[RMDB]
RNA sequence: GGGAACGACUCGAGUAGAGUCGAAAAGGCAAUGGAAAUCGAAGAAUUUGGUCCACAAAUCACCGCCCUCGAGGCGCGCGUGCAGGAAGUAUGGGGGAGUCUUUGACGUUGCCGCAUACGAGGCGCGCCGGGAUUUACCGUUCGCGGUAAAUCCCGGAAAAGAAACAACAACAACAAC
Reactivity to DMS in 0.01 (KOAc 150mM, MgCl2 10mM, bicine 150mM(pH8.5), 24C), signal-to-noise 3, nucleotides 027 to 126: g010g000c040a090a060u000g000g010a080a110a090u020c050g000a060a060g020a060a010u010u000u010g010g010u020c030c040a040c140a020a060a050u020c130a040c080c020g000c030c020c010u040c080g000a100g000g020c020g010c020g000c010g000u030g050c090a060g000g010a050a130g000u010a040u000g010g000g010g000g000a190g010u000c010u020u010u040g000a030c020g000u000u020g030c000c000g030c010a040u010a010c050g000a130g010g010c040g010c010g000
Reactivity to 2A3 in 0.01 (KOAc 150mM, MgCl2 10mM, bicine 150mM(pH8.5), 24C), signal-to-noise 4, nucleotides 027 to 126: g050g000c040a020a020u100g030g070a060a040a050u080c060g030a040a040g040a070a130u090u030u060g070g010u050c030c010a030c020a070a060a010u130c030a040c030c020g010c020c010c000u080c070g050a090g020g000c010g000c000g010c010g030u070g060c040a030g040g090a070a070g040u040a040u130g010g020g040g000g050a040g020u010c010u050u030u180g030a030c040g060u070u130g080c010c000g010c010a040u070a060c030g020a030g060g000c010g000c000g000
Source information:
Chemical mapping of a 177-nucleotide RNA with DMS and 2A3. DMS adducts were read by reverse transcription with MarathonRT. Source: RMDB library OK1LIB, as collected in RNAgym. High DMS reactivity at an A or C suggests that its Watson-Crick edge is free. For 2A3 the reverse transcriptase was SuperScript II with manganese. The reactions ran in a buffer of 150 mM KOAc, 10 mM MgCl2 and 150 mM bicine (pH 8.5), at 24 C. The DMS profile rests on 5,874 reads.